[RMDB]
RNA sequence: GGGAACGACUCGAGUAGAGUCGAAAAAAAUCGCCACUAAAAUGUUUGAUUCCUUUGUUAAUAGUUUCGUCUCGCUGUAUAAUGUCACACGCGAUAAGUUGGAAAAACUUAUCUCUACUGCUCGUGAAAGGAUUAGUCUUCGGACUAAUCAAAAGAAACAACAACAACAAC
Reactivity to 2A3 in 0.01 (KOAc 150mM, MgCl2 10mM, bicine 150mM(pH8.5), 24C), signal-to-noise 4, nucleotides 027 to 129: a000a000a020u160c040g000c040c000a040c030u110a000a010a020a020u150g100u080u080u090g080a130u070u070c010c000u000u070u090g040u070u060a090a070u060a140g060u070u070u040c040g030u010c020u010c020g010c030u000g010u000a070u010a120a080u080g000u010c070a030c000a000c170g030c020g030a010u000a020a020g000u000u020g110g020a300a040a020a000a000c010u010u000a010u000c010u000c030u120a090c050u040g050c040u010c060g040u040g070a110a000a000g160
Reactivity to DMS in 0.01 (KOAc 150mM, MgCl2 10mM, bicine 150mM(pH8.5), 24C), signal-to-noise 3, nucleotides 027 to 129: a050a120a040u030c060g030c150c020a040c170u080a040a080a130a090u000g020u020u000u020g020a080u000u000c000c000u010u030u050g000u040u020a120a100u050a000g040u070u000u000c090g040u020c020u020c040g030c000u000g010u000a050u020a030a020u000g020u040c060a080c100a000c090g020c180g000a000u010a000a000g030u000u000g010g010a000a050a030a010a000c030u030u000a020u020c000u060c000u030a070c130u030g030c070u050c090g040u050g020a040a100a000g020